[RMDB]
RNA sequence: GGGAACGACUCGAGUAGAGUCGAAAAGGGGGUUCUUGUUAAAAAGACACAAUGAGAGAGAUUGUGUCUAACGAUAGAUCGUUAAGGUCAAUAAACUCUCAAAUCUAUAACGAACUAUAAGAACCCACUGAUAGGUUGCGUUCGCGUAAUCUGUCAGAAAAGAAACAACAACAACAAC
Reactivity to DMS in 0.01 (KOAc 150mM, MgCl2 10mM, bicine 150mM(pH8.5), 24C), signal-to-noise 9, nucleotides 027 to 126: g010g010g010g000g010u000u000c010u000u010g010u020u020a050a080a100a110a030g000a020c020a010c010a010a010u000g000a140g010a130g010a110g000a100u000u000g010u000g000u000c000u000a020a040c160g000a080u000a020g000a060u000c010g010u000u000a020a060g010g010u010c130a070a120u030a070a060a090c130u020c090u010c100a080a120a030u000c020u000a100u010a010a010c020g000a030a080c040u000a010u000a040a030g000a010a010c000c000c010a130
Reactivity to 2A3 in 0.01 (KOAc 150mM, MgCl2 10mM, bicine 150mM(pH8.5), 24C), signal-to-noise 9, nucleotides 027 to 126: g150g010g000g000g000u010u000c010u020u030g060u060u070a100a090a030a020a000g010a000c010a000c010a030a030u110g030a060g020a020g000a000g020a230u000u000g000u000g000u000c010u010a020a010c020g020a010u030a050g070a070u020c000g000u000u010a040a020g020g010u020c020a030a050u150a130a100a060c080u090c010u020c090a090a160a030u020c020u030a250u010a130a010c020g030a030a020c020u010a020u010a150a000g000a000a000c000c000c000a010